An RNA of 177 nucleotides, treated with 2A3 and read out base by base.
RNA sequence: GGGAACGACUCGAGUAGAGUCGAAAAAGUCAUGUCGCUGCAUACAUUCCUACCGCAAACGCAUAAUAAGAUAUGCGAUUGUUCGUGGGAUAUUGUGAAUCGGUAUGAUGAACGAUUCGCUUUUUGCGUCACCUGCACUGUUCGCAGUGCAGGUGACAAAAGAAACAACAACAACAAC
Reactivity to 2A3 in 0.01 (KOAc 150mM, MgCl2 10mM, bicine 150mM(pH8.5), 24C), signal-to-noise 2, nucleotides 027 to 126: a000g000u000c000a000u000g030u010c010g010c060u020g090c000a040u010a080c040a040u020u020c000c000u000a010c000c010g020c000a000a020a000c000g000c000a000u010a040a010u080a150a110g100a150u040a020u060g000c010g000a000u020u010g040u020u100c090g010u020g040g000g000a030u050a050u070u060g010u000g000a030a020u050c000g000g010u030a010u020g030a010u030g050a050a030c040g060a140u050u050c130g030c080u080u010u040u100u150g010c030

The data come from the RNA Mapping Database (RMDB), library OK1LIB.